[RMDB]
RNA sequence: GGGAACGACUCGAGUAGAGUCGAAAACGGGUGUUCCGCCUCCCGAGAGGGGACGAGUGAGGCUUAUCCCGGGGAACCCGGCGAAUCGUCCCCACAUAGCAGCUCCCGGACCCCCUUCCAAAGAGACGUAGAACAGGGUUCGCCCUGUUCAAAAGAAACAACAACAACAAC
Reactivity to 2A3 in 0.01 (KOAc 150mM, MgCl2 10mM, bicine 150mM(pH8.5), 24C), signal-to-noise 8, nucleotides 027 to 129: c030g010g010g010u040g050u140u040c040c030g040c020c030u040c020c010c020g050a080g020a030g000g000g000g000a010c010g000a030g110u170g070a050g060g020c040u080u120a100u170c010c000c010g010g010g010g030a080a090c040c000c000g010g010c070g040a030a060u020c010g010u000c000c010c020c000a000c000a000u030a000g020c030a000g010c010u010c000c000c000g030g010a070c020c000c010c000c010u080u020c030c010a070a100a010g100a020g010a040c090g090u120a040
Reactivity to DMS in 0.01 (KOAc 150mM, MgCl2 10mM, bicine 150mM(pH8.5), 24C), signal-to-noise 7, nucleotides 027 to 129: c090g000g020g000u030g030u030u020c050c070g020c050c020u040c020c000c050g000a100g030a130g050g020g000g020a040c040g000a050g050u090g000a140g010g000c090u020u030a160u070c130c010c020g000g010g000g000a090a080c090c040c020g000g000c070g030a030a100u000c000g000u020c020c010c010c010a020c050a080u020a070g050c000a040g030c030u000c040c030c000g010g010a100c010c000c000c000c020u030u050c010c020a030a050a060g030a050g040a110c050g040u070a100